Structure probing data (DMS and 2A3) for a 177-nucleotide construct. For 2A3 the reverse transcriptase was SuperScript II with manganese. The 2A3 profile rests on 2,474 reads. Conditions: 150 mM KOAc, 10 mM MgCl2 and 150 mM bicine (pH 8.5), 24 C. In probing experiments dimethyl sulfate is read out at A N1 and C N3, which are open when not base-paired. The data come from the RNA Mapping Database (RMDB), library OK1LIB.
RNA sequence: GGGAACGACUCGAGUAGAGUCGAAAAGAUUACGUGUCGUUGUGGAACCGAUACUACGCACGAGAUUCCAAGGUCUCUGUAGUACGUCCGCUGGUGACGUCUUUGGAGUCACGUUCGAUAUACGAAAGGUAUCUACAACGUUCGCGUUGUAGAUACCAAAAGAAACAACAACAACAAC
Reactivity to DMS in 0.01 (KOAc 150mM, MgCl2 10mM, bicine 150mM(pH8.5), 24C), signal-to-noise 2, nucleotides 027 to 126: g030a150u010u000a070c080g000u010g000u000c010g010u000u000g020u010g000g000a040a060c070c020g020a040u020a040c070u010a020c010g030c140a060c050g000a100g000a020u000u010c020c030a070a040g030g000u000c010u020c030u040g000u010a040g010u030a000c040g010u000c010c010g010c200u020g000g000u060g000a020c010g010u000c000u000u010u010g010g000a090g000u000c020a010c000g030u000u000c010g040a070u000a000u020a080c040g000a050a100a100
Reactivity to 2A3 in 0.01 (KOAc 150mM, MgCl2 10mM, bicine 150mM(pH8.5), 24C), signal-to-noise 2, nucleotides 027 to 126: g090a070u120u140a000c050g000u000g030u070c000g000u000u090g010u000g010g000a040a080c000c000g000a010u030a060c050u030a010c010g030c010a050c050g010a020g010a000u070u000c060c040a040a010g020g000u000c000u000c040u110g050u070a070g060u060a020c020g040u000c000c000g000c140u120g070g100u160g020a000c030g030u050c050u090u010u080g050g000a040g000u030c010a010c010g020u030u020c000g020a040u010a020u010a140c030g050a090a000a040